[RMDB]
RNA sequence: GGGAACGACUCGAGUAGAGUCGAAAAGAGAGAGUCGCUAGGUGAUCGUCAGAUCUGCCUAGUCUCUAUACAGCGUGUUUAAUUGACAUGGGUUGAUGCGUAUUGAGAGAUACAAUUUGGGAAGAAAUUCCCAGAGUGUGUUUCUUUUGCGUUUAACGUAGCAUAGUAUGUUCGCAUACUAUGCUACAAAAGAAACAACAACAACAAC
Reactivity to 2A3 in 0.01 (KOAc 150mM, MgCl2 10mM, bicine 150mM(pH8.5), 24C), signal-to-noise 6, nucleotides 027 to 156: g090a000g010a000g000a010g060u160c100g010c020u000a010g000g000u020g010a000u010c010g170u170c160a050g000a020u000c040u080g050c000c000u000a000g000u000c000u000c000u000a040u030a010c060a030g060c040g020u030g060u010u040u070a140a140u100u220g040a020c030a050u060g070g000g030u030u050g030a070u090g030c010g010u030a100u100u140g020a020g000a000g000a010u020a020c000a010a020u010u000u020g000g010g000a010a010g020a020a080a060u020u010c010c010c000a000g000a010g010u010g000u000g000u000u000u010c000u000u010u010u020g010c000g010u040u080u070a060a010c070
Reactivity to DMS in 0.01 (KOAc 150mM, MgCl2 10mM, bicine 150mM(pH8.5), 24C), signal-to-noise 2, nucleotides 027 to 156: g000a180g020a090g000a110g000u000c120g040c000u000a000g010g050u000g000a020u000c000g000u010c300a160g010a030u000c020u020g060c010c000u000a010g000u000c010u000c010u000a110u000a130c020a070g010c020g020u010g000u000u000u000a080a170u000u000g010a000c020a060u000g010g010g020u000u000g020a110u000g010c020g000u000a090u010u000g000a020g000a030g010a010u000a000c010a000a040u000u010u000g010g000g000a050a020g010a080a090a300u000u000c000c010c000a020g010a010g020u010g010u000g000u000u000u000c000u000u010u000u000g010c040g020u010u000u010a070a160c240